[RMDB]
RNA sequence: GGGAACGACUCGAGUAGAGUCGAAAAAUAUUUGAGUAUAGUAGGUAAGAGGCAAAUGUAAUUCCUAGUUUGCUGACUUGAGUGGCUGAUCAUGUUCAAUAACUGAAUUGGGAAUAAGAUUAUAUAGACCGUAAUAAAGAUUCGUCUUUAUUACGGUAAAAGAAACAACAACAACAAC
Reactivity to 2A3 in 0.01 (KOAc 150mM, MgCl2 10mM, bicine 150mM(pH8.5), 24C), signal-to-noise 6, nucleotides 027 to 126: a000u140a060u010u070u050g000a010g000u050a030u040a060g040u010a020g040g030u040a050a050g010a030g050g000c020a010a010a030u050g020u080a060a070u030u010c010c000u000a020g020u000u040u020g010c020u020g030a140c020u060u040g020a030g050u070g080g000c030u020g030a050u050c020a030u060g060u100u020c030a070a060u080a160a050c040u050g050a050a060u060u060g020g010g000a010a010u050a070a030g030a060u200u130a090u100a040u070a260g100
Reactivity to DMS in 0.01 (KOAc 150mM, MgCl2 10mM, bicine 150mM(pH8.5), 24C), signal-to-noise 9, nucleotides 027 to 126: a070u000a050u000u000u000g010a080g010u000a050u000a060g010u000a030g010g010u010a060a060g020a300g010g010c030a030a050a050u000g010u010a090a110u000u000c000c010u000a100g010u000u000u000g010c100u000g000a060c080u000u000g000a060g020u000g010g010c070u000g010a110u010c050a030u000g000u010u010c040a050a080u010a060a080c170u000g000a040a050u000u000g010g010g010a030a050u010a050a110g000a090u000u000a080u000a130u010a130g010
Chemical mapping of a 177-nucleotide RNA with 2A3 and DMS.
The 2A3 profile rests on 8,189 reads.
Source: RMDB library OK2TST, as collected in RNAgym.
For DMS the reverse transcriptase was MarathonRT.